[RMDB]
RNA sequence: GGGAACGACUCGAGUAGAGUCGAAAAUUCAGCGAUUCAUAGUCGAGGCCAUAGGCCUUGAGCCCGCCGACCUUGAAGUUCUCCAGCAGGAUGUCGGCCUUGGCCGCCAGUUCGCGAACGAUGCGCAACUACCGAGUAUCUUCGGAUACUCGGUAGUAAAAGAAACAACAACAACAAC
Reactivity to DMS in 0.01 (KOAc 150mM, MgCl2 10mM, bicine 150mM(pH8.5), 24C), signal-to-noise 3, nucleotides 027 to 126: u000u000c100a090g010c030g010a060u000u010c070a060u000a120g020u000c030g020a040g000g000c040c010a120u010a100g030g020c000c000u010u000g000a130g010c040c040c210g020c060c040g010a040c090c030u000u000g000a110a110g020u000u000c010u010c010c060a090g020c060a080g000g010a100u010g020u000c040g000g000c020c090u000u000g000g010c040c020g010c070c030a090g020u000u000c030g010c020g020a050a070c130g000a050u000g010c030g010c110a140
Reactivity to 2A3 in 0.01 (KOAc 150mM, MgCl2 10mM, bicine 150mM(pH8.5), 24C), signal-to-noise 2, nucleotides 027 to 126: u100u020c040a020g030c000g090a060u090u080c060a080u090a150g090u050c030g030a040g010g000c020c010a180u190a190g000g020c040c000u000u060g030a020g010c000c000c020g020c010c000g020a030c020c020u080u080g090a110a020g030u120u050c070u030c000c010a040g000c020a010g010g080a030u110g080u070c050g020g000c000c050u050u090g050g000c000c000g000c020c000a050g050u090u110c020g000c000g000a040a020c070g030a030u130g000c070g010c040a020
This 177-nucleotide RNA was probed chemically with DMS and 2A3.
The RNA was probed in 150 mM KOAc, 10 mM MgCl2 and 150 mM bicine (pH 8.5) at 24 C.
Reactivities are given for positions 27 through 126.
The DMS profile rests on 2,722 reads.
The data come from the RNA Mapping Database (RMDB), library OK2TST.
The 2A3 profile rests on 2,049 reads.